The data come from the RNA Mapping Database (RMDB), library TTRINS. Chemical mapping of a 177-nucleotide RNA with DMS and 2A3.
RNA sequence: GGGAACGACUCGAGUAGAGUCGAAAAGAUAUGGACGGUGAACUACAACUGAUGUCACCUUUGCUUGGAUUUACUAUCGGAAACGAUAGUUGUCAGCAAAGGUGACGCAGUUGCACCGUCCUAAGUCGAUCGUCAUAUAGUUCGCUAUAUGACGAUCAAAAGAAACAACAACAACAAC
Reactivity to DMS in 0.01 (KOAc 150mM, MgCl2 10mM, bicine 150mM(pH8.5), 24C), signal-to-noise 5, nucleotides 027 to 126: g010a100u000a300u020g000g020a030c020g010g010u000g020a100a050c120u020a300c020a000a010c000u000g000a080u010g020u000c000a000c000c000u000u000u000g010c000u010u020g030g000a020u000u010u010a000c000u000a000u000c000g010g010a160a100a250c010g010a010u000a010g010u000u000g010u010c000a030g000c000a010a000a010g000g010u000g000a000c020g010c000a020g000u000u000g000c000a020c000c010g000u010c000c000u000a010a070g010u010c120
Reactivity to 2A3 in 0.01 (KOAc 150mM, MgCl2 10mM, bicine 150mM(pH8.5), 24C), signal-to-noise 8, nucleotides 027 to 126: g110a070u160a080u230g000g010a000c010g020g050u010g020a120a110c110u300a070c300a020a000c000u050g090a300u200g250u020c010a010c010c000u000u000u020g030c030u130u280g290g040a140u300u300u300a050c010u010a010u000c010g050g010a120a060a040c010g010a000u000a000g000u000u000g000u000c000a000g000c000a010a010a000g000g000u000g000a000c000g000c010a000g000u000u000g000c000a000c000c000g000u000c010c000u000a010a010g030u030c060
The RNA was probed in 150 mM KOAc, 10 mM MgCl2 and 150 mM bicine (pH 8.5) at 24 C. Values cover nucleotides 27 to 126.